[RMDB]
RNA sequence: GGGAACGACUCGAGUAGAGUCGAAAAGCUCGGAGACGAGCAAGGCUGACAAAACCAUGUCCCAACCUCCACGUGGUGUCGGCUGGAUAAUGCUGCAUUAUGUUGCAUUUAUCAACUGGGAACAAAAGGCACGACUAUGGUUCGCCAUAGUCGUGCCAAAAGAAACAACAACAACAAC
Reactivity to 2A3 in 0.01 (KOAc 150mM, MgCl2 10mM, bicine 150mM(pH8.5), 24C), signal-to-noise 1, nucleotides 027 to 126: g000c000u000c000g000g000a020g020a030c000g000a020g000c000a030a000g100g000c000u000g000a000c000a000a200a070a010c000c000a010u040g150u010c000c000c000a020a190c010c060u060c040c010a010c030g050u020g000g000u000g000u000c000g000g050c100u070g070g030a000u000a000a000u000g000c000u000g010c020a050u150u240a140u300g000u020u030g000c000a000u060u010u010a030u030c000a000a040c080u040g000g000g000a070a000c050a020a160a010a030
Notes:
Chemical mapping of a 177-nucleotide RNA with 2A3. The 2A3 profile rests on 648 reads. 2A3 adducts were read by reverse transcription with SuperScript II with manganese. The reactions ran in a buffer of 150 mM KOAc, 10 mM MgCl2 and 150 mM bicine (pH 8.5), at 24 C. 2A3 is a SHAPE reagent: it acylates the 2'-hydroxyl of flexible nucleotides of all four kinds.